Overview: An RNA of 177 nucleotides, treated with DMS and 2A3 and read out base by base. DMS adducts were read by reverse transcription with MarathonRT. The DMS profile rests on 1,247 reads. The data come from the RNA Mapping Database (RMDB), library OK2TST. Values cover nucleotides 27 to 126. The reactions ran in a buffer of 150 mM KOAc, 10 mM MgCl2 and 150 mM bicine (pH 8.5), at 24 C.
RNA sequence: GGGAACGACUCGAGUAGAGUCGAAAAAGCAUUCUUGGUAUCCUCUGACUAAACUGCAUAUCUGAAUGGCAACGUGAAUUCUGAACUUUCGCUCAGGCAUGCUUUCGUUUUCAAGUCGAGACGAACGCCUGGCAUUCUUAUUCGUAAGAAUGCCAGGAAAAGAAACAACAACAACAAC
Reactivity to DMS in 0.01 (KOAc 150mM, MgCl2 10mM, bicine 150mM(pH8.5), 24C), signal-to-noise 2, nucleotides 027 to 126: a110g010c100a060u000u000c030u000u000g000g000u000a130u000c040c000u000c060u030g010a070c040u020a050a100a100c110u010g000c100a060u010a060u000c020u020g020a090a070u000g020g030c130a030a070c150g020u000g020a030a120u000u010c030u000g020a070a070c070u000u000u000c080g020c060u000c040a010g000g010c060a120u000g010c120u010u010u010c090g000u000u000u000u000c060a070a120g020u000c070g010a040g010a100c050g000a070a130c230g000
Reactivity to 2A3 in 0.01 (KOAc 150mM, MgCl2 10mM, bicine 150mM(pH8.5), 24C), signal-to-noise 1, nucleotides 027 to 126: a000g040c020a070u020u040c020u060u120g000g050u090a110u050c020c000u100c050u060g020a020c010u020a010a130a030c030u040g000c000a000u010a020u060c090u030g080a120a080u130g040g000c050a060a030c050g050u040g060a060a140u150u000c040u090g040a010a030c000u010u050u080c060g000c020u060c020a020g050g000c040a000u040g000c000u040u100u040c000g000u000u010u090u000c050a020a040g020u060c030g040a010g010a040c010g020a100a020c040g020